[RMDB]
RNA sequence: GGGAACGACUCGAGUAGAGUCGAAAAGUAAUCGACAGUAGAGUGUAUCAUGUCAGUAAGCAUGCCGGGGAAUGGUGGUUUACCCCGUUAUCAAAUGAUUACCGACCAAUAAUUGGCGAAACUCGUUAGGCCCGUCCACACUUCGGUGUGGACGGAAGGUUUCUGUGAACUUCGGUUCACAGAAACCAAAAGAAACAACAACAACAAC
Reactivity to 2A3 in 0.01 (KOAc 150mM, MgCl2 10mM, bicine 150mM(pH8.5), 24C), signal-to-noise 1, nucleotides 027 to 156: g050u000a000a060u020c070g030a020c010a020g160u210a050g020a010g060u150g000u130a040u200c040a010u060g160u130c010a010g070u060a070a000g040c030a040u100g030c000c000g000g000g000g000a000a000u070g010g040u000g020g000u010u090u120a000c010c010c010c000g030u030u070a060u090c020a050a100a050u070g020a020u040u030a010c000c010g030a100c030c070a030a020u190a210a130u170u070g070g000c090g090a040a100a070c140u080c050g070u070u070a030g010g140c020c030c000g000u000c010c000a020c000a000c000u010u060c180g130g060u000g000u000g000g000a000c000g000g000a000a000